This 177-nucleotide RNA was probed chemically with DMS and 2A3. The reactions ran in a buffer of 150 mM KOAc, 10 mM MgCl2 and 150 mM bicine (pH 8.5), at 24 C. DMS adducts were read by reverse transcription with MarathonRT. For 2A3, 1,730 sequencing reads were counted. It was measured as part of the RMDB library OK2TRN. For DMS, 2,267 sequencing reads were counted.

RNA sequence: GGGAACGACUCGAGUAGAGUCGAAAACAAUGCGCCAGCAGUAGUUACAUCCAGGCUGUUUCCCAUACCACAAGCUGGGAUACCAGAUGGCUGGUUUUGGAUUAGUGGACACUUUGAAUCACUACACCGUACGGAAUCAGUUCGCUGAUUCCGUACGAAAAGAAACAACAACAACAAC
Reactivity to DMS in 0.01 (KOAc 150mM, MgCl2 10mM, bicine 150mM(pH8.5), 24C), signal-to-noise 3, nucleotides 027 to 126: c100a070a080u020g030c090g010c080c050a050g030c050a080g010u010a070g010u000u000a110c150a060u010c030c030a110g000g010c020u000g000u000u010u000c030c010c020a070u000a120c090c050a110c150a060a110g040c070u000g000g020g000a150u020a080c060c010a030g010a100u000g010g010c070u000g020g000u020u000u020u000g000g000a120u000u000a040g010u000g010g020a050c060a100c220u000u000u020g010a110a100u010c020a030c030u010a030c230a120c170
Reactivity to 2A3 in 0.01 (KOAc 150mM, MgCl2 10mM, bicine 150mM(pH8.5), 24C), signal-to-noise 1, nucleotides 027 to 126: c000a030a100u220g030c060g000c080c000a000g010c010a020g160u150a020g010u080u140a040c010a030u010c010c010a010g080g030c050u030g000u000u020u010c000c010c010a020u140a030c040c040a030c040a180a010g010c030u030g030g000g000a040u100a160c020c040a000g040a130u040g090g080c090u020g030g000u030u020u100u180g050g020a020u070u030a030g020u020g000g010a030c030a010c120u160u190u180g060a160a030u070c000a010c020u060a030c030a020c070